[RMDB]
RNA sequence: GGGAACGACUCGAGUAGAGUCGAAAAACUAUCUAGCUUAAGUUUUAGUCAUCUUUGGUAGUGUAGUUUUAAGACUUGACGCACCUUAAAGUGAAGUUUAGUCUAGUCAAAUUUGUAAGUUUUGGAAGAUGAGCGGAAUUUGAUGAAAGAGUCAUCUCUCUAAUACAGGCUUCGGCCUGUAUUAGAGAAAAGAAACAACAACAACAAC
Reactivity to 2A3 in 0.01 (KOAc 150mM, MgCl2 10mM, bicine 150mM(pH8.5), 24C), signal-to-noise 2, nucleotides 027 to 156: a000c010u020a020u070c020u050a010g160c020u110u110a120a060g050u110u070u080u190a070g060u100c080a130u060c080u010u030u060g010g000u010a020g000u010g020u090a020g000u010u000u020u130a080a030g000a010c000u000u000g010a000c000g000c010a010c010c010u080u210a160a140a030g000u020g080a230a010g000u010u050u090a000g000u010c030u000a000g010u000c010a000a020a050u080u030u050g130u100a080a100g000u020u010u110u050g010g000a030a010g000a010u030g000a000g030c010g030g020a050a040u020u020u030g000a030u010g020a000a010a100g070a010g030u010c000a030u000c010u020
An RNA of 207 nucleotides, treated with 2A3 and read out base by base. For 2A3 the reverse transcriptase was SuperScript II with manganese. The data come from the RNA Mapping Database (RMDB), library RSTRND. The 2A3 profile rests on 1,120 reads.